Conditions: 150 mM KOAc, 10 mM MgCl2 and 150 mM bicine (pH 8.5), 24 C. Structure probing data (DMS) for a 177-nucleotide construct. The DMS profile rests on 1,089 reads. DMS adducts were read by reverse transcription with MarathonRT. DMS (dimethyl sulfate) methylates the pairing face of unpaired adenines and cytosines.
[RMDB]
RNA sequence: GGGAACGACUCGAGUAGAGUCGAAAAGUUGCCCGAGAAGAGAUCACACAGAUGAGACACAAGGAGCGAUGUCUCAUCACUUGGUUUUCGACUAGUGACGAGUCGUUCCCAAAAUCGCUCCAAUGAAUACGUCCAAUGAUUUCGAUCAUUGGACGUAAAAAGAAACAACAACAACAAC
Reactivity to DMS in 0.01 (KOAc 150mM, MgCl2 10mM, bicine 150mM(pH8.5), 24C), signal-to-noise 2, nucleotides 027 to 126: g000u000u040g020c270c030c000g000a040g010a160a180g010a150g000a030u010c140a150c140a150c240a070g000a000u000g000a020g000a000c010a020c110a080a110g000g010a010g010c010g020a050u010g000u000c000u000c010a000u000c000a110c010u030u000g020g040u000u000u000u000c000g000a010c000u010a040g000u000g000a060c030g000a020g000u000c000g000u000u000c000c010c020a020a030a020a030u000c010g020c020u000c000c030a180a070u030g000a210a190